[RMDB]
RNA sequence: GGGAACGACUCGAGUAGAGUCGAAAAAUGGGGUUUCUCCAUGGGUCGGGACUUUAAAUUCGGAGGAUUCGUCCUUCAAACGUUCCUCCAAGAGUCCUUUCCCCAAACCCUUACGUUGUAAGUAGGGCAUUUAGGAGGUGUUCGCACCUCCUAAAUGAAAAGAAACAACAACAACAAC
Reactivity to 2A3 in 0.01 (KOAc 150mM, MgCl2 10mM, bicine 150mM(pH8.5), 24C), signal-to-noise 2, nucleotides 027 to 126: a000u040g020g000g000g000u050u050u070c050u000c050c000a060u060g000g010g060u070c060g020g030g000a000c000u050u030u070a080a080a100u130u130c300g000g020a000g000g020a030u180u050c010g000u040c040c000u170u100c060a080a050a000c010g000u000u000c000c000u010c000c010a010a010g010a000g010u020c010c030u020u010u020c010c000c010c010a020a110a130c020c000c010u000u050a040c030g130u120u190g090u240a110a170g000u010a020g000g000g050
Reactivity to DMS in 0.01 (KOAc 150mM, MgCl2 10mM, bicine 150mM(pH8.5), 24C), signal-to-noise 2, nucleotides 027 to 126: a040u010g000g000g000g010u020u010u010c020u000c020c030a080u000g010g010g010u010c300g000g000g010a020c010u000u010u010a230a020a190u010u000c050g000g000a010g000g000a060u010u000c010g020u000c020c060u030u020c280a040a130a030c010g000u000u000c010c000u000c010c010a040a060g000a010g000u000c010c010u000u000u000c050c010c010c210a070a090a140c130c000c010u010u000a020c050g020u000u010g010u010a090a100g000u010a020g000g010g000